[RMDB]
RNA sequence: GGGAACGACUCGAGUAGAGUCGAAAAUUUCAACAGCAAAUUGCUCCAACAUAUCUUGAGACCAUAAUUUCUGUUCAUAAAUUUGUCCUACGACACUCACAUGCCAACCAAUAGAUAAUGCUGUGGCCGUCUUUCUGAGAUUCGUCUCAGAAAGACGAAAAGAAACAACAACAACAAC
Reactivity to DMS in 0.01 (KOAc 150mM, MgCl2 10mM, bicine 150mM(pH8.5), 24C), signal-to-noise 2, nucleotides 027 to 126: u020u000u000c100a040a060c070a020g000c110a010a050a060u000u000g010c070u000c070c080a050a130c100a040u010a060u000c020u000u010g020a130g010a090c080c100a060u020a100a060u000u000u010c010u000g000u000u010c220a060u010a040a060a090u000u000u000g010u000c010c020u020a090c110g020a040c060a080c080u020c010a010c080a060u000g000c050c070a050a070c140c050a020a080u030a090g010a060u010a070a070u000g000c030u000g000u000g020g000c110
Reactivity to 2A3 in 0.01 (KOAc 150mM, MgCl2 10mM, bicine 150mM(pH8.5), 24C), signal-to-noise 2, nucleotides 027 to 126: u020u060u040c030a060a060c000a000g050c050a050a030a100u080u080g010c030u000c030c000a060a060c020a080u150a110u130c050u040u080g010a060g040a040c030c050a040u060a130a140u130u040u020c020u030g010u020u050c040a050u130a300a050a010u080u090u070g040u000c020c030u060a050c060g050a010c020a000c020u030c010a010c020a040u090g000c000c000a020a060c010c040a050a030u070a120g120a040u100a170a040u170g000c030u020g010u020g110g030c030

Chemical mapping of a 177-nucleotide RNA with DMS and 2A3. For DMS the reverse transcriptase was MarathonRT. For 2A3, 1,438 sequencing reads were counted. The reactions ran in a buffer of 150 mM KOAc, 10 mM MgCl2 and 150 mM bicine (pH 8.5), at 24 C. Source: RMDB library OK2TST, as collected in RNAgym.